Annotation: Chemical mapping of a 177-nucleotide RNA with 2A3 and DMS. For DMS the reverse transcriptase was MarathonRT. The RNA was probed in 150 mM KOAc, 10 mM MgCl2 and 150 mM bicine (pH 8.5) at 24 C.
[RMDB]
RNA sequence: GGGAACGACUCGAGUAGAGUCGAAAACUGACCUGCCAGUCGGGUCGCAUCCGACGUCAGGCCGACGUGUGACAGGGACCGCGCCGCCGCGGUGACCUCGUCGGCGUCGACGUUUUCGGCCAGGACCCCGUAUUUCCCACUUCGGUGGGAAAUACGGAAAAGAAACAACAACAACAAC
Reactivity to 2A3 in 0.01 (KOAc 150mM, MgCl2 10mM, bicine 150mM(pH8.5), 24C), signal-to-noise 3, nucleotides 027 to 126: c040u070g110a160c000c000u000g020c020c000a040g010u040c000g030g000g030u060c060g010c060a070u060c000c000g020a020c010g000u000c030a050g000g020c010c000g010a000c000g060u150g050u140g060a040c040a050g000g000g010a010c000c000g020c000g070c050c100g170c090c070g010c040g010g000u040g070a210c000c020u040c090g000u000c000g000g000c000g010u080c070g000a000c030g000u030u020u010u020c010g000g000c030c010a070g040g050a060c000c000
Reactivity to DMS in 0.01 (KOAc 150mM, MgCl2 10mM, bicine 150mM(pH8.5), 24C), signal-to-noise 1, nucleotides 027 to 126: c030u030g030a040c000c010u000g000c120c020a170g000u000c030g000g040g000u010c210g020c240a190u030c000c000g030a000c000g000u000c000a130g030g040c160c050g020a000c000g000u000g000u010g000a010c010a060g000g010g020a030c010c020g040c010g010c060c180g060c120c000g050c000g000g000u000g000a090c000c040u000c030g060u000c000g010g030c000g020u020c100g000a130c030g000u000u000u090u000c030g030g000c090c040a000g000g020a170c000c030